[RMDB]
RNA sequence: GGGAACGACUCGAGUAGAGUCGAAAAGCAGUUUCACUCUCUAUAGACUCAUGAGGUAGAGUGUCAGUUGUGCUACCUCAUGCACAAUAUUAGAGUUCGAAUGAACUCUAACUGACGACAGAAUCGCUUCUGUCCUAUAGAGUGAAACUGGAGAGUCCACUAGGAUCUACUUCGGUAGAUCCUAGUGAAAAGAAACAACAACAACAAC
Reactivity to 2A3 in 0.01 (KOAc 150mM, MgCl2 10mM, bicine 150mM(pH8.5), 24C), signal-to-noise 2, nucleotides 027 to 156: g060c000a000g000u010u000u010c010a010c010u040c010u000c020u030a000u000a010g010a020c000u000c030a060u090g140a060g120g050u140a030g020a010g010u050g040u010c030a020g000u010u030g030u030g020c000u030a060c030c020u120c030a010u070g000c000a010c010a010a050u080a060u120u030a000g000a000g000u000u000c000g120a120a120u250g000a000a020c000u000c000u010a010a000c010u040g000a010c020g000a010c000a000g020a010a020u160c110g010c090u060u000c000u010g010u000c000c000u010a000u000a010g000a000g000u000g000a000a010a000c000u000g000g000a030g000a000g040u010c010
Reactivity to DMS in 0.01 (KOAc 150mM, MgCl2 10mM, bicine 150mM(pH8.5), 24C), signal-to-noise 2, nucleotides 027 to 156: g020c030a040g020u010u000u010c020a040c030u000c060u010c100u000a070u010a050g010a120c050u000c030a090u000g010a010g000g000u010a050g010a060g010u010g020u000c030a130g020u010u000g010u000g000c010u000a100c050c090u000c070a060u000g030c050a020c050a080a080u000a090u010u000a020g010a010g010u010u000c000g020a180a190u020g010a000a010c000u000c000u010a000a010c070u000g000a090c040g000a030c000a060g000a040a300u010c150g030c160u000u000c010u000g030u010c010c020u000a060u000a020g010a050g030u010g000a030a010a030c010u010g010g000a090g000a100g010u020c040
The record gives the reactivity of an RNA of 207 nucleotides to 2A3 and DMS. The RNA was probed in 150 mM KOAc, 10 mM MgCl2 and 150 mM bicine (pH 8.5) at 24 C. The DMS profile rests on 3,785 reads. For 2A3 the reverse transcriptase was SuperScript II with manganese. Reactivities are given for positions 27 through 156.